The record gives the reactivity of an RNA of 177 nucleotides to DMS. Conditions: 150 mM KOAc, 10 mM MgCl2 and 150 mM bicine (pH 8.5), 24 C. Values are in units of 0.01, from 0 to 300, in steps of 10. Reactivities are given for positions 27 through 126.

RNA sequence: GGGAACGACUCGAGUAGAGUCGAAAACUCGCAGUGUGCAACCUUACUAGCAAGUCGAAGUAAAGAGCAACAAUAUAUGGACAUGAGUCGACAGAAAGUACUCGAACAAUAUGAACGGCUUAUUGCAUCAGACCCAACUUUUCGAAGUUGGGUCUGAAAAAGAAACAACAACAACAAC
Reactivity to DMS in 0.01 (KOAc 150mM, MgCl2 10mM, bicine 150mM(pH8.5), 24C), signal-to-noise 1, nucleotides 027 to 126: c000u000c070g050c120a140g020u010g000u010g020c020a040a090c140c130u000u010a080c000u000a160g000c070a050a100g000u000c030g050a140a090g030u000a010a060a230g000a180g090c040a010a050c010a030a050u050a050u010a170u000g000g000a110c050a120u000g000a060g020u000c010g010a150c270a060g000a110a060a090g010u000a080c080u000c120g020a020a070c060a080a060u000a020u020g000a070a170c150g000g000c000u000u010a100u010u000g020c130a040